[RMDB]
RNA sequence: GGGAACGACUCGAGUAGAGUCGAAAAGGCAUUGGAGGUUGGACAGCUGCUCAAGAUGAACCUCGUCGGGUUCAACAACCGCCGGUAUGACAACCAUAUCCUCUACGGUGCCCUCUUGGGCUUCAACAAUGCGCAGUUGUACAAGCUCAGUAAGAAGGAAGUAAUAGCCAUUCGUGGCUAUUACUUCAAAAGAAACAACAACAACAAC
Reactivity to 2A3 in 0.01 (KOAc 150mM, MgCl2 10mM, bicine 150mM(pH8.5), 24C), signal-to-noise 2, nucleotides 027 to 156: g080g010c080a060u110u190g090g000a000g120g050u030u030g000g020a020c010a000g000c010u020g000c000u010c090a030a020g030a090u080g000a020a000c010c000u060c040g040u070c080g000g000g020u080u050c040a080a120c040a050a070c050c030g000c010c020g000g000u180a020u020g050a080c070a060a050c080c010a020u070a010u230c010c020u050c030u020a000c020g000g010u020g000c000c010c000u130c050u050u110g010g030g050c000u020u050c020a060a070c040a010a070u030g030c030g000c020a000g000u000u020g000u010a020c000a030a010g040c040u030c060a030g060u100a050a040g030a100a030g180
Reactivity to DMS in 0.01 (KOAc 150mM, MgCl2 10mM, bicine 150mM(pH8.5), 24C), signal-to-noise 2, nucleotides 027 to 156: g010g000c030a140u000u000g040g010a090g000g000u000u010g030g020a100c040a070g000c030u000g000c000u000c040a060a100g010a270u000g000a020a010c000c020u000c100g030u010c090g000g030g020u000u000c000a030a120c050a090a020c000c010g010c020c300g000g040u010a040u010g010a150c120a140a210c140c010a000u000a040u000c010c110u000c030u010a030c050g000g030u010g010c010c070c020u010c080u010u000g040g000g040c040u000u010c050a130a040c000a080a150u020g000c130g000c040a000g000u000u000g000u010a050c080a070a080g010c010u010c020a200g000u000a030a100g000a190a190g010